[RMDB]
RNA sequence: GGGAACGACUCGAGUAGAGUCGAAAAGCGCCGCGAAGAUCAUCGAUGGGCACACCAAACUCGGGGUCGCCGCGGGGGAUCACGCGGCGAUCUGCUGGCCCCUGCUGGUCGGCAUGGCCAAGGCCAACUAAUAGCAUGGGUUCGCCCAUGCUAUUAGAAAAGAAACAACAACAACAAC
Reactivity to DMS in 0.01 (KOAc 150mM, MgCl2 10mM, bicine 150mM(pH8.5), 24C), signal-to-noise 4, nucleotides 027 to 126: g010c080g020c000c010g010c060g020a170a050g010a030u000c040a070u000c040g010a070u010g000g010g010c050a060c100a150c060c050a080a110a190c130u030c120g000g010g000g010u000c030g010c000c010g020c000g020g000g000g010g010a080u020c050a090c010g000c010g000g010c030g020a010u010c020u010g010c050u000g000g020c030c010c030c100u020g000c110u010g010g010u010c010g010g020c080a010u010g000g000c050c040a090a150g000g000c040c040a090a200
Reactivity to 2A3 in 0.01 (KOAc 150mM, MgCl2 10mM, bicine 150mM(pH8.5), 24C), signal-to-noise 8, nucleotides 027 to 126: g060c060g000c020c020g020c030g050a090a030g040a080u090c030a020u050c060g110a110u150g020g010g000c050a020c010a020c050c030a140a110a120c090u120c140g040g000g010g010u010c020g000c000c010g000c000g010g010g010g040g040a060u170c030a020c080g000c000g010g000c000g000a010u010c000u000g000c010u010g010g020c000c000c010c030u120g070c080u070g000g020u020c010g030g010c040a090u110g020g000c020c030a050a050g070g010c020c000a020a020